[RMDB]
RNA sequence: GGGAACGACUCGAGUAGAGUCGAAAAGACUGAUGUAGAGUUCGGUUGGAGCGACAAGUAUUUAGCUUGAGAUAGCUAAAUCACCUCGGUAUGAUUAGGGUGAGACCUAGGAACCGUAGGGGUUUUCAAUGCUGUAUUGCGUUCGCGCAAUACAGAAGAUUCAGUUGUUCUUCGGAACAACUGAAUCAAAAGAAACAACAACAACAAC
Reactivity to DMS in 0.01 (KOAc 150mM, MgCl2 10mM, bicine 150mM(pH8.5), 24C), signal-to-noise 1, nucleotides 027 to 156: g030a090c020u000g020a060u010g010u010a100g000a080g000u000u010c040g040g000u010u000g000g020a110g020c030g020a060c010a060a090g000u000a080u000u000u000a010g040c000u000u000g000a290g000a060u000a030g020c000u000a010a030a050u000c090a030c020c050u010c040g000g010u000a120u020g000a250u000u000a010g000g010g000u010g020a300g010a140c000c020u000a090g000g000a120a090c000c010g000u010a070g030g000g010g000u000u000u000u000c020a060a120u000g060c010u010g000u000a010u000u000g000c000g000u000u000c300g060c040g000c010a010a000u000a020c000a000g000a000a080
Reactivity to 2A3 in 0.01 (KOAc 150mM, MgCl2 10mM, bicine 150mM(pH8.5), 24C), signal-to-noise 3, nucleotides 027 to 156: g050a030c070u060g040a050u120g040u170a040g010a030g040u020u070c030g040g000u010u040g030g030a060g040c050g080a070c050a080a030g050u090a030u010u010u000a000g000c000u020u020g020a020g000a060u120a030g000c000u000a000a000a010u000c010a020c010c010u030c010g020g000u300a210u140g030a060u040u030a010g020g030g000u050g100a070g030a050c000c000u000a010g000g030a010a030c010c000g000u050a040g000g020g000g020u000u020u020u120c090a090a070u140g040c000u000g000u010a000u000u000g000c000g010u000u050c170g000c000g000c100a000a000u000a000c000a000g000a010a010
Overview
This 207-nucleotide RNA was probed chemically with DMS and 2A3. Reactivities are given for positions 27 through 156. DMS adducts were read by reverse transcription with MarathonRT. The RNA was probed in 150 mM KOAc, 10 mM MgCl2 and 150 mM bicine (pH 8.5) at 24 C.